Structure probing data (DMS) for a 177-nucleotide construct.
Reactivities are given for positions 27 through 126.
RNA sequence: GGGAACGACUCGAGUAGAGUCGAAAAAGAAUUGCUUGAACGCGGGAGGUGGAGGUUGUGGUGAGUCGGAGAUCGCGCCAUUGCACUCUAGCCUGGGCAAUAAGAGCAAAACUCCGUCUCAAAAAAAUAAUUACCGAAAGUUCGCUUUCGGUAAUUAAAAAGAAACAACAACAACAAC
Reactivity to DMS in 0.01 (KOAc 150mM, MgCl2 10mM, bicine 150mM(pH8.5), 24C), signal-to-noise 2, nucleotides 027 to 126: a080g010a140a070u000u010g010c050u020u000g000a050a080c130g010c050g010g020g000a100g000g010u000g000g000a070g000g020u000u010g020u000g000g030u000g000a030g000u000c020g030g010a040g020a080u000c180g000c200g000c010c030a020u000u000g020c020a030c030u010c040u010a140g000c100c060u000g000g000g000c020a010a040u000a050a100g010a130g000c020a050a050a070a100c010u000c010c000g000u000c010u000c010a000a010a030a120a080a040a090